This 177-nucleotide RNA was probed chemically with 2A3. The reactions ran in a buffer of 150 mM KOAc, 10 mM MgCl2 and 150 mM bicine (pH 8.5), at 24 C. For 2A3 the reverse transcriptase was SuperScript II with manganese.
[RMDB]
RNA sequence: GGGAACGACUCGAGUAGAGUCGAAAAGCAAACGAUGUCGUUACUAAGGUACUCGGUUUGUAUGUCGAAGCCAUGGCACUGUCUUACAUCGGCGACAGCGCCGCCCGGACCAUCGCUGGUGCGGCUCGACGGACCCUCAGUUCGCUGAGGGUCCGUCAAAAGAAACAACAACAACAAC
Reactivity to 2A3 in 0.01 (KOAc 150mM, MgCl2 10mM, bicine 150mM(pH8.5), 24C), signal-to-noise 1, nucleotides 027 to 126: g090c040a050a000a000c000g010a000u140g000u090c050g000u000u150a130c050u140a230a040g060g020u110a050c050u050c130g130g060u020u110u090g070u020a200u160g040u050c120g010a100a030g050c090c110a180u170g030g090c020a020c060u060g020u030c010u020u180a090c010a130u090c170g140g000c020g000a010c000a020g000c060g090c000c000g000c040c000c020g000g010a000c020c020a060u080c120g000c120u060g000g000u030g050c000g030g020c000u000c030